[RMDB]
RNA sequence: GGGAACGACUCGAGUAGAGUCGAAAAGUAUGACUGGUUCACUUCUUACACUCAAGGGGUUGAAGGCUUUGUCAAAUACAAAGACACUAGGUUAAGGGUGAUGUAUUCAGACGCUAGGGCUUCAGCGGACUAGCGUUCAGUUCGCUGAACGCUAGUCAAAAGAAACAACAACAACAAC
Reactivity to 2A3 in 0.01 (KOAc 150mM, MgCl2 10mM, bicine 150mM(pH8.5), 24C), signal-to-noise 2, nucleotides 027 to 126: g020u050a060u140g040a040c040u040g040g050u120u100c040a030c020u080u020c000u040u070a060c050a050c070u110c050a070a110g010g000g000g000u040u050g030a040a030g050g050c000u060u060u080g020u020c040a070a050a030u130a020c020a000a080a000g060a040c020a010c090u050a040g250g030u160u080a030a050g050g030g020u010g020a030u060g020u000a110u010u060c080a030g000a070c010g000c050u020a020g030g020g070c010u050u020c030a010g050c020g050
Reactivity to DMS in 0.01 (KOAc 150mM, MgCl2 10mM, bicine 150mM(pH8.5), 24C), signal-to-noise 4, nucleotides 027 to 126: g010u010a060u000g010a040c070u010g000g010u000u010c020a060c050u000u010c030u020u010a090c160a100c060u010c090a080a110g010g010g010g010u000u000g000a060a100g010g000c030u000u000u000g000u000c070a080a060a070u010a060c040a030a030a130g000a100c050a090c070u010a130g010g010u010u010a080a080g010g010g020u000g010a130u000g020u000a050u000u010c080a110g000a100c090g000c080u000a030g020g010g010c070u000u000c040a030g020c050g020